The record gives the reactivity of an RNA of 177 nucleotides to DMS and 2A3. The RNA was probed in 150 mM KOAc, 10 mM MgCl2 and 150 mM bicine (pH 8.5) at 24 C. For 2A3 the reverse transcriptase was SuperScript II with manganese. Source: RMDB library OK1LIB, as collected in RNAgym. The DMS profile rests on 7,911 reads. For DMS the reverse transcriptase was MarathonRT.
[RMDB]
RNA sequence: GGGAACGACUCGAGUAGAGUCGAAAAGUAUUUUUCAUAUUCAAAGCUACCUGAUUAUUCUUCUGCUUCCUCUUCUUCUUCAGGAUUUAAGAUUUCAGGUAUGGAUUUGCUACCUGCUUUGGUAACACAUGGAUUAUACCUUCGGGUAUAAUCCAUGAAAAGAAACAACAACAACAAC
Reactivity to DMS in 0.01 (KOAc 150mM, MgCl2 10mM, bicine 150mM(pH8.5), 24C), signal-to-noise 4, nucleotides 027 to 126: g010u020a020u030u010u000u010u000c040a070u030a060u040u020c040a050a050a060g000c060u000a050c000c000u020g000a040u030u010a070u030u000c030u000u010c100u020g000c150u000u000c000c000u000c060u010u010c080u000u010c080u000u020c110a070g000g000a120u020u010u040a030a060g010a040u000u010u000c030a010g010g010u000a030u030g000g010a080u010u020u010g020c070u010a060c020c000u000g000c080u020u010u000g000g010u000a060a090c190a210
Reactivity to 2A3 in 0.01 (KOAc 150mM, MgCl2 10mM, bicine 150mM(pH8.5), 24C), signal-to-noise 9, nucleotides 027 to 126: g060u050a200u040u100u030u060u080c050a060u080a090u120u130c050a050a040a050g020c020u030a040c000c010u020g040a080u060u130a090u180u050c030u030u010c030u060g080c070u060u030c010c010u040c020u140u050c020u090u030c020u090u120c120a030g010g040a080u050u090u130a070a020g020a040u020u050u030c000a000g010g000u010a030u110g030g010a060u020u040u220g050c020u040a080c010c020u030g030c050u080u080u110g070g010u100a080a000c040a000